This 207-nucleotide RNA was probed chemically with 2A3. 2A3 adducts were read by reverse transcription with SuperScript II with manganese. The data come from the RNA Mapping Database (RMDB), library M2RFPK. Conditions: 150 mM KOAc, 10 mM MgCl2 and 150 mM bicine (pH 8.5), 24 C.

[RMDB]
RNA sequence: GGGAACGACUCGAGUAGAGUCGAAAAAGAGGCGAUACGUCGCCUCAAGCUUGGUGCUUAGCUUCUUUCACCAAGCAUAUUACACGCGGAUAACCUCCAAAGGAGAAACACUGACUACGGUCAGUGAGGAAGUUGGUUCGGUUCGCCGAACCAACAAGGAAACGACAAUCUUCGGAUUGUCGUUUCCAAAAGAAACAACAACAACAAC
Reactivity to 2A3 in 0.01 (KOAc 150mM, MgCl2 10mM, bicine 150mM(pH8.5), 24C), signal-to-noise 1, nucleotides 027 to 156: a020g000a000g010g000c030g030a000u000a070c230g120u000c000g000c040c000u000c000a010a000g000c000u000u000g000g000u020g000c030u110u030a090g000c010u000u000c000u030u090u000c000a000c010c000a000a000g060c020a010u040a020u050u200a020c110a000c050g140c100g000g020a010u010a140a120c030c030u080c020c030a130a080a020g000g030a030g020a000a190a000c000a000c000u000g000a010c000u010a020c190g000g000u000c000a000g000u000g000a000g020g060a110a110g010u010u000g000g000u000u030c010g000g000u030u030c170g030c120c000g000a020a020c020c000a000a000c000a000a010